[RMDB]
RNA sequence: GGGAACGACUCGAGUAGAGUCGAAAAGCAAGGCGAUCGAGUCCGAUGACGACAGCACGCACAUCGAGCUCGGGAUAGAGCUCGCCAAGCGCAUGGGCGAGGACAGCAGGGUGAUCAACUGCAUCGCGCACACGCACCAAUUCGUUGGUGCGUGUGCAAAAGAAACAACAACAACAAC
Reactivity to DMS in 0.01 (KOAc 150mM, MgCl2 10mM, bicine 150mM(pH8.5), 24C), signal-to-noise 1, nucleotides 027 to 126: g000c070a050a090g000g000c020g000a020u000c090g030a100g000u000c060c030g000a180u030g000a270c080g000a090c090a000g050c140a150c080g010c060a020c060a070u000c000g000a050g000c000u000c000g000g030g030a090u000a110g000a090g000c060u030c000g000c030c010a070a120g030c000g000c090a090u000g010g010g000c100g030a060g000g000a190c180a100g010c020a020g000g020g050u000g010a120u020c080a150a090c030u000g010c070a120u000c090g000c120
Reactivity to 2A3 in 0.01 (KOAc 150mM, MgCl2 10mM, bicine 150mM(pH8.5), 24C), signal-to-noise 1, nucleotides 027 to 126: g050c020a010a060g040g000c030g060a040u010c000g000a080g060u000c020c000g030a040u070g030a040c040g040a040c070a080g090c110a080c060g050c010a090c020a050u020c010g020a010g010c000u000c010g120g000g010a050u160a110g080a030g030c040u020c000g000c020c000a050a020g030c010g000c040a080u120g000g010g000c010g040a070g000g050a020c010a040g000c000a000g050g030g020u300g120a070u170c030a000a070c030u000g000c020a010u060c030g030c000

Overview
This 177-nucleotide RNA was probed chemically with DMS and 2A3. The 2A3 profile rests on 1,220 reads.